[RMDB]
RNA sequence: GGGAACGACUCGAGUAGAGUCGAAAAUGGACUGUGCUUUUAAUGUUAUAUCGAUGAACACUUUGCCUAAGUCAAAGUCAUGAAGAUUUUCUUGUAAGUUUUUCUUUUUCAGAGAUAGGGUCUUGCUCUGUUGUUCGGGCUAGAGUGCAGAGGUGUAAAAAUUACUAUCAUUCGUGAUAGUAAUUUUAAAAGAAACAACAACAACAAC
Reactivity to 2A3 in 0.01 (KOAc 150mM, MgCl2 10mM, bicine 150mM(pH8.5), 24C), signal-to-noise 2, nucleotides 027 to 156: u090g030g010a000c030u000g010u030g050c000u040u080u140u210a080a080u100g050u090u060a140u060a040u200c050g030a010u070g060a060a010c020a000c020u000u020u050g020c050c080u140a140a040g050u110c000a010a020a020g040u030c020a020u080g070a050a120g030a050u100u040u130u140c050u100u100g090u150a050a250g100u110u050u040u090u020c030u120u080u030u070u110c030a020g010a000g010a020u020a060g020g020g020u050c020u030u030g000c010u000c020u060g030u070u000g010u040u080c010g000g010g000c000u030a040g010a010g060u030g010c020a000g020a020g050g000u030g020u030a050
Reactivity to DMS in 0.01 (KOAc 150mM, MgCl2 10mM, bicine 150mM(pH8.5), 24C), signal-to-noise 1, nucleotides 027 to 156: u000g000g000a070c030u000g040u000g030c020u020u000u000u000a030a090u000g000u010u000a100u000a240u010c040g000a150u000g000a070a130c040a050c010u000u000u000g010c020c080u000a080a090g000u010c020a030a030a110g020u000c040a070u030g020a080a130g010a110u000u000u000u000c000u000u000g010u000a110a220g000u000u000u010u000u020c000u000u020u000u030u000c060a150g000a190g020a040u000a100g010g000g000u000c050u000u000g020c000u000c040u020g020u000u010g020u010u000c030g000g020g030c040u000a050g000a120g020u000g020c030a070g000a150g000g020u010g010u010a060